Structure probing data (DMS and 2A3) for a 207-nucleotide construct. 2A3 adducts were read by reverse transcription with SuperScript II with manganese. The 2A3 profile rests on 3,015 reads.
RNA sequence: GGGAACGACUCGAGUAGAGUCGAAAACUUUGUUCUGAUCAUCUGAAGAUCAGCUAUUAGAAGAGAAAGAUCAGUUAAGUCCUUUGGACCUGAUCAGCUUGAUACAAGAACUACUGAUUUCAACUUCAAAACGGGUGCUACUUCGGUAGCACCCGAACGUAAAAACGAAGUUCGCUUCGUUUUUACGAAAAGAAACAACAACAACAAC
Reactivity to DMS in 0.01 (KOAc 150mM, MgCl2 10mM, bicine 150mM(pH8.5), 24C), signal-to-noise 2, nucleotides 027 to 156: c070u000u020u000g000u000u000c000u000g000a020u010c020a160u000c190u010g020a200a280g000a040u010c000a030g000c120u000a120u000u000a150g000a090a020g010a070g000a130a110a070g020a000u010c010a020g020u000u000a060a060g080u010c000c020u000u010u010g010g000a030c020c010u000g000a180u000c170a130g000c120u000u010g010a130u020a090c050a000a020g000a040a030c000u000a080c000u010g000a020u010u000u000c000a080a300c030u010u000c010a050a020a080a160c010g030g040g060u010g010c030u000a010c010u000u000c280g010g010u000a020g000c000a010c000c000c000g000a000a000
Reactivity to 2A3 in 0.01 (KOAc 150mM, MgCl2 10mM, bicine 150mM(pH8.5), 24C), signal-to-noise 5, nucleotides 027 to 156: c010u080u070u170g060u200u110c000u000g010a010u000c020a030u010c100u190g110a130a060g000a060u010c000a010g010c010u060a150u300u170a060g030a040a010g020a010g080a070a050a020g020a010u000c000a000g010u020u170a130a010g010u020c020c020u100u120u290g040g020a050c010c020u070g040a070u060c010a020g060c010u040u120g020a020u060a140c060a080a030g020a070a020c030u090a010c010u090g020a040u030u070u070c070a130a080c020u040u050c030a010a010a070a090c020g000g000g000u000g000c000u000a000c000u010u050c140g090g000u000a000g000c010a000c000c000c000g000a000a000

About this RNA: Source: RMDB library M2RFPK, as collected in RNAgym. Conditions: 150 mM KOAc, 10 mM MgCl2 and 150 mM bicine (pH 8.5), 24 C.